Chemical mapping of a 177-nucleotide RNA with 2A3 and DMS. It was measured as part of the RMDB library RFM100.
[RMDB]
RNA sequence: GGGAACGACUCGAGUAGAGUCGAAAAAAAUCCGGUCUCCAGGAGGGCGAGGCUCCGGACGAAGCGAUCGAGCGAAGCGAGUGAGCCCGAGGUCCCUAGAAAAACCCCUAGGCAGGCGCCAUCGCGCAGGGAUAUUUUUGUUCGCAAAAAUAUCCCUAAAAGAAACAACAACAACAAC
Reactivity to 2A3 in 0.01 (KOAc 150mM, MgCl2 10mM, bicine 150mM(pH8.5), 24C), signal-to-noise 2, nucleotides 027 to 126: a000a000a000u050c010c020g020g010u040c040u020c000c020a010g040g030a030g060g080g000c040g000a070g000g040c030u040c020c000g040g030a060c030g030a080a010g040c030g070a100u150c040g040a030g020c020g030a120a010g080c030g040a020g070u140g040a010g030c000c000c000g000a030g010g040u060c000c000c010u040a040g100a070a100a050a070a080c000c020c000c010u010a010g020g030c030a020g090g000c000g010c020c020a060u090c040g010c010g010c030
Reactivity to DMS in 0.01 (KOAc 150mM, MgCl2 10mM, bicine 150mM(pH8.5), 24C), signal-to-noise 2, nucleotides 027 to 126: a080a050a080u010c020c010g010g000u000c010u010c040c010a160g010g000a070g010g010g000c050g000a120g010g010c040u000c020c020g020g020a140c060g000a100a230g000c060g000a100u010c160g000a150g020c040g000a120a300g000c080g000a210g000u040g000a160g000c010c010c030g000a110g010g010u020c010c030c000u020a100g000a010a030a090a130a070c050c030c020c030u000a070g040g000c100a080g000g000c000g020c070c110a010u010c050g050c070g030c100